Structure probing data (DMS and 2A3) for a 177-nucleotide construct.

RNA sequence: GGGAACGACUCGAGUAGAGUCGAAAAGCGCGGGCUGCGGGUGGUCGCCGGGCAAGUCGUCAGCGACCGGCUGUUGCGGCCCGAGCUGCACACGACCCCCGAGCGAGCUUACGCGGAGGGCAAAGCCCCCUCUCUUUCGGUUCGCCGAAAGAGAGGGAAAAGAAACAACAACAACAAC
Reactivity to DMS in 0.01 (KOAc 150mM, MgCl2 10mM, bicine 150mM(pH8.5), 24C), signal-to-noise 3, nucleotides 027 to 126: g010c000g010c020g010g020g020c000u000g010c000g000g030g000u020g000g000u000c000g010c010c100g000g030g010c030a100a200g010u010c120g010u000c010a300g000c000g000a010c030c010g020g040c010u010g000u000u030g040c030g000g010c000c000c010g000a010g020c010u000g000c180a110c120a120c100g000a230c270c010c000c010c000g010a300g020c020g000a160g050c150u020u020a080c080g020c040g020g000a160g000g000g000c100a060a050a190g000c050c050
Reactivity to 2A3 in 0.01 (KOAc 150mM, MgCl2 10mM, bicine 150mM(pH8.5), 24C), signal-to-noise 2, nucleotides 027 to 126: g010c010g000c010g050g000g000c000u000g010c050g020g140g270u040g020g010u020c010g000c020c060g040g010g010c070a160a060g300u240c060g030u040c080a010g000c000g040a030c000c000g060g020c030u110g090u300u230g000c000g020g020c000c000c000g000a000g000c010u010g000c040a060c000a020c040g080a110c020c000c000c000c000g020a010g010c000g000a050g050c120u170u140a050c060g010c020g000g000a010g000g040g000c000a080a090a080g010c000c040

For 2A3, 1,449 sequencing reads were counted. Conditions: 150 mM KOAc, 10 mM MgCl2 and 150 mM bicine (pH 8.5), 24 C.